[RMDB]
RNA sequence: GGGAACGACUCGAGUAGAGUCGAAAACUUCGAAAUUGAUUGACUUAUGGACAUGUGAGGUGGCUGCGAGCUAGCAGCGCCAGGGGACUUGUCGCACCUGAGCGCGCUGGCGAAUUCCCCGCAGUCAGACUCACUAUCGGUUCGCCGAUAGUGAGUCAAAAGAAACAACAACAACAAC
Reactivity to 2A3 in 0.01 (KOAc 150mM, MgCl2 10mM, bicine 150mM(pH8.5), 24C), signal-to-noise 3, nucleotides 027 to 126: c020u120u090c030g100a100a120a110u240u140g080a160u040u070g030a080c020u070u130a070u200g160g030a050c020a100u120g050u080g050a020g000g050u020g000g000c000u000g020c010g040a030g010c000u000a000g000c100a030g000c000g000c000c000a000g020g020g000g020a020c020u080u100g110u160c100g010c050a150c000c000u050g010a080g020c010g010c000g000c010u000g000g000c010g000a010a030u050u030c010c010c000c010g000c000a000g000u000c000a000
Reactivity to DMS in 0.01 (KOAc 150mM, MgCl2 10mM, bicine 150mM(pH8.5), 24C), signal-to-noise 2, nucleotides 027 to 126: c090u000u030c060g020a030a070a090u010u010g020a070u010u020g000a090c080u000u000a090u010g010g000a080c080a020u000g010u010g020a100g000g030u000g010g000c000u000g000c010g000a200g010c000u000a000g000c030a100g050c010g000c000c010a050g020g000g030g020a110c070u010u000g010u030c040g030c120a140c000c000u000g000a090g000c000g010c020g010c010u020g000g000c000g000a020a220u040u000c040c000c000c000g000c000a000g020u000c020a040